Source: RMDB library OK2TST, as collected in RNAgym. This 177-nucleotide RNA was probed chemically with 2A3 and DMS. For 2A3, 806 sequencing reads were counted. For 2A3 the reverse transcriptase was SuperScript II with manganese. Conditions: 150 mM KOAc, 10 mM MgCl2 and 150 mM bicine (pH 8.5), 24 C.
RNA sequence: GGGAACGACUCGAGUAGAGUCGAAAAAGCAGCGUAAAAAUAACUUGGUUGCGAGUAUCCAUAACCUGCAAAAUGCGUUGCACUUCAUUUGCAGAGAUAACAGAGGGUAGCCGUCUAGGCUUGCUUACAGUCCGACUAUAUUCGUAUAGUCGGACUGAAAAGAAACAACAACAACAAC
Reactivity to 2A3 in 0.01 (KOAc 150mM, MgCl2 10mM, bicine 150mM(pH8.5), 24C), signal-to-noise 1, nucleotides 027 to 126: a000g040c010a010g010c010g140u180a060a010a080a130a150u120a220a130c100u070u120g030g050u040u090g030c140g010a020g080u010a060u050c000c000a030u010a040a030c040c000u000g000c000a000a000a000a110u030g070c090g040u120u150g040c010a040c070u130u050c000a030u050u000u120g000c010a000g050a010g010a120u020a150a080c090a110g130a060g150g000g010u010a010g000c010c010g030u140c150u090a040g000g020c020u040u050g040c020u050u040a080
Reactivity to DMS in 0.01 (KOAc 150mM, MgCl2 10mM, bicine 150mM(pH8.5), 24C), signal-to-noise 3, nucleotides 027 to 126: a050g010c000a030g010c030g020u010a000a060a140a140a070u010a050a110c130u000u000g020g000u000u010g010c050g000a100g020u010a070u000c010c060a080u000a120a110c130c000u000g010c050a030a020a030a060u000g010c300g000u000u000g010c080a160c160u000u000c050a090u000u010u010g010c020a010g010a090g000a110u000a040a030c160a060g040a120g010g020g000u010a060g010c010c020g020u000c130u010a090g000g020c030u000u010g010c010u000u010a120